[RMDB]
RNA sequence: GGGAACGACUCGAGUAGAGUCGAAAAAUAGCCGAUGCACCGAAAUCAACGCUAACUACCAUCCACUCACAUUUAUGGUCACUAUUUAACCAAUAUCGUGAGGCCAUUGAACGUCCAAGCGCGACUACUUCCUCCUCCCUAUUGGGUCUUGGUAGGGUACAAGACUCGAAUUCGUUCGAGUCUUGUAAAAAGAAACAACAACAACAAC
Reactivity to DMS in 0.01 (KOAc 150mM, MgCl2 10mM, bicine 150mM(pH8.5), 24C), signal-to-noise 2, nucleotides 027 to 156: a120u000a080g040c040c030g030a150u000g050c030a300c100c040g020a080a110a110u000c060a070a090c010g020c020u010a070a090c060u000a070c050c010a080u000c010c010a190c010u010c010a030c010a100u000u000u000a140u020g020g020u010c020a100c130u000a120u010u000u000a040a040c020c000a040a150u030a030u010c090g010u020g020a060g020g020c100c020a110u010u010g010a090a070c070g020u000c030c030a070a080g010c020g000c020g000a060c050u000a040c030u000u000c020c030u000c030c020u020c010c010c010u000a090u000u010g000g020g030u010c050u000u000g000g020u000a030g010g010g000
Reactivity to 2A3 in 0.01 (KOAc 150mM, MgCl2 10mM, bicine 150mM(pH8.5), 24C), signal-to-noise 4, nucleotides 027 to 156: a010u060a010g020c010c010g040a040u050g020c060a040c030c030g080a120a020a060u090c030a030a090c050g020c060u030a040a040c030u060a070c020c020a020u050c050c020a060c020u040c010a030c010a100u070u080u050a200u070g000g020u030c030a030c160u170a200u160u150u120a050a030c010c010a030a030u040a010u090c070g010u020g020a010g050g020c030c020a040u050u090g050a060a040c020g030u030c020c050a070a010g040c020g010c010g110a030c010u100a010c010u070u030c000c010u010c000c000u000c000c010c000u020a040u000u090g120g000g000u020c020u020u010g000g000u000a010g010g000g000

About this RNA
This 207-nucleotide RNA was probed chemically with DMS and 2A3. 2A3 adducts were read by reverse transcription with SuperScript II with manganese. For 2A3, 2,461 sequencing reads were counted. Conditions: 150 mM KOAc, 10 mM MgCl2 and 150 mM bicine (pH 8.5), 24 C. It was measured as part of the RMDB library OK3TST.